[RMDB]
RNA sequence: GGGAACGACUCGAGUAGAGUCGAAAAUCGAACGAGAGUACUCGAACACACUCACACGAGAGUACUCGAUCGUGUGUGAGAUCACACGAGUGUGAGUUCGAACUCGUGAGUGUACGUUCUCGUACGAGUGUGAGUACUCGAGUACGUACACGAGAACCACCAAGAAAUGGUUCGCCAUUUCUUGGUGAAAAGAAACAACAACAACAAC
Reactivity to 2A3 in 0.01 (KOAc 150mM, MgCl2 10mM, bicine 150mM(pH8.5), 24C), signal-to-noise 9, nucleotides 027 to 156: u070c020g010a020a050c020g020a010g010a010g150u020a010c010u010c020g100a190a020c030a010c000a010c030u010c000a040c010a010c060g030a000g000a010g020u030a010c000u000c010g010a010u000c010g000u010g000u000g020u040g140a160g040a150u230c010a000c000a000c010g000a020g020u220g060u070g030a030g000u040u050c060g030a120a090c020u010c020g030u040g030a120g050u130g010u030a010c020g060u140u100c100u070c080g000u020a010c050g000a010g000u020g010u020g010a030g040u050a050c050u010c020g000a000g000u000a010c010g010u040a020c050a020c070g050a030g000a050a020c010
Reactivity to DMS in 0.01 (KOAc 150mM, MgCl2 10mM, bicine 150mM(pH8.5), 24C), signal-to-noise 3, nucleotides 027 to 156: u000c050g010a100a100c000g010a260g030a100g030u000a020c030u000c030g020a090a180c050a110c060a070c040u000c020a210c040a100c020g010a130g010a210g000u010a030c020u000c010g000a060u000c000g020u020g030u010g030u000g020a140g010a170u020c010a050c020a030c020g010a050g010u010g040u010g010a050g000u000u000c050g000a120a150c010u010c010g020u000g000a260g030u000g030u000a030c000g000u020u010c040u000c000g040u000a110c000g000a100g020u010g020u000g000a150g000u000a050c080u010c000g020a080g040u000a020c000g010u000a040c030a090c010g000a110g000a120a110c110